[RMDB]
About this RNA
This 177-nucleotide RNA was probed chemically with DMS and 2A3. For 2A3, 24,082 sequencing reads were counted. It was measured as part of the RMDB library OK2TST. For 2A3 the reverse transcriptase was SuperScript II with manganese. The DMS profile rests on 32,057 reads.
RNA sequence: GGGAACGACUCGAGUAGAGUCGAAAAAGUCACCUCUAAUAACGGGCUUGAGAUUUGCUCAGUUGGCCACUGGUGCACAUUACAAACUGCGCUCCAUUAUCGUCCGUAUGGGAAUAGGGUACCAGGACUUACCCUUAUAAUUCGUUAUAAGGGUAAGAAAAGAAACAACAACAACAAC
Reactivity to DMS in 0.01 (KOAc 150mM, MgCl2 10mM, bicine 150mM(pH8.5), 24C), signal-to-noise 9, nucleotides 027 to 126: a070g010u000c060a100c040c020u000c090u010a100a090u010a100a100c110g000g000g010c010u010u000g010a150g000a130u000u010u010g010c010u000c020a040g020u000u000g010g010c060c050a140c070u010g000g010u010g010c030a050c080a080u000u000a090c150a060a070a110c100u000g000c080g010c020u000c050c060a060u000u000a070u000c090g010u000c030c030g010u000a060u000g010g000g000a060a060u000a070g010g000g010u000a070c050c040a070g000g010a210
Reactivity to 2A3 in 0.01 (KOAc 150mM, MgCl2 10mM, bicine 150mM(pH8.5), 24C), signal-to-noise 9, nucleotides 027 to 126: a000g080u080c060a100c100c020u010c050u090a130a240u100a130a050c040g020g010g020c010u060u100g050a050g010a160u090u080u110g010c010u000c020a030g020u040u040g070g040c020c030a070c070u050g030g040u090g040c030a020c010a110u090u200a060c060a060a110a020c030u040g010c020g010c030u020c040c010a070u130u130a080u170c050g030u010c010c030g050u050a080u090g050g010g040a020a080u050a120g060g000g010u020a030c010c020a020g000g040a010